[RMDB]
An RNA of 207 nucleotides, treated with 2A3 and read out base by base.

RNA sequence: GGGAACGACUCGAGUAGAGUCGAAAACCGGCGAGCCGCUCGUCGACAAGGGCAGCUUCGUUGUGAACGAAGUCGAGCACAGCGGCGCGCCGGACAUCAUCACCAUCCGCGCGCGCUCGGCCGCGAUGACGAGCGGCAUGCAGGAGCGCCGCGAGAACAAAUGAGGUGAAUUCGUUCACCUCAUUUGAAAAGAAACAACAACAACAAC
Reactivity to 2A3 in 0.01 (KOAc 150mM, MgCl2 10mM, bicine 150mM(pH8.5), 24C), signal-to-noise 1, nucleotides 027 to 156: c000c000g010g000c000g040a020g000c000c000g030c020u070c210g040u020c020g110a080c020a080a100g000g170g060c110a090g000c060u140u090c090g250u150u190g280u180g110a100a010c000g000a030a000g030u150c020g050a000g110c070a000c000a070g000c010g000g000c000g000c000g000c000c000g010g000a000c000a020u170c000a030u070c000a000c150c000a140u020c010c000g000c000g000c020g000c000g020c000u050c040g040g000c010c000g000c020g070a110u190g110a060c160g010a000g010c030g000g000c010a030u140g040c060a010g260g000a000g000c000g000c000c000g000c000g000a000g030a000a050
Background
The 2A3 profile rests on 498 reads. The RNA was probed in 150 mM KOAc, 10 mM MgCl2 and 150 mM bicine (pH 8.5) at 24 C.